[RMDB]
RNA sequence: GGGAACGACUCGAGUAGAGUCGAAAACAACACGUCUUCGGACGUGUUGAAACGUGGUGCGUACGAUAACGGAUAUAAAGCCCAAGACAAGCAGGGCAAAAAAAACAACCAGCUUCGGCUGGUUGAACCUCAUAGUAUACUUCGGUAUACUAUGAGGAAAAGAAACAACAACAACAAC
Reactivity to 2A3 in 0.01 (KOAc 150mM, MgCl2 10mM, bicine 150mM(pH8.5), 24C), signal-to-noise 4, nucleotides 027 to 126: c000a000a000c000a010c000g010u000c000u040u070c210g110g010a000c000g000u000g000u020u020g000a020a000a000c030g020u050g040g050u100g050c010g030u030a020c020g010a070u030a130a040c040g050g050a010u060a010u030a240a110a020g010c030c000c010a040a030g110a090c070a080a030g060c070a120g010g000g000c000a000a020a010a000a020a000a010a030c000a000a000c000c000a000g000c000u050u110c150g190g000c010u000g000g000u000u000g000a000a000
Reactivity to DMS in 0.01 (KOAc 150mM, MgCl2 10mM, bicine 150mM(pH8.5), 24C), signal-to-noise 4, nucleotides 027 to 126: c010a010a010c010a000c000g000u010c000u000u010c200g040g010a010c000g020u000g000u000u020g010a040a050a130c070g000u000g010g020u000g010c030g000u000a040c060g000a100u010a050a060c050g020g000a070u000a120u010a040a100a150g010c020c000c000a080a090g020a270c100a050a100g000c180a110g000g010g010c040a000a000a000a020a020a030a050a060c000a000a010c000c000a000g000c000u000u010c190g030g020c000u010g000g010u000u000g010a020a090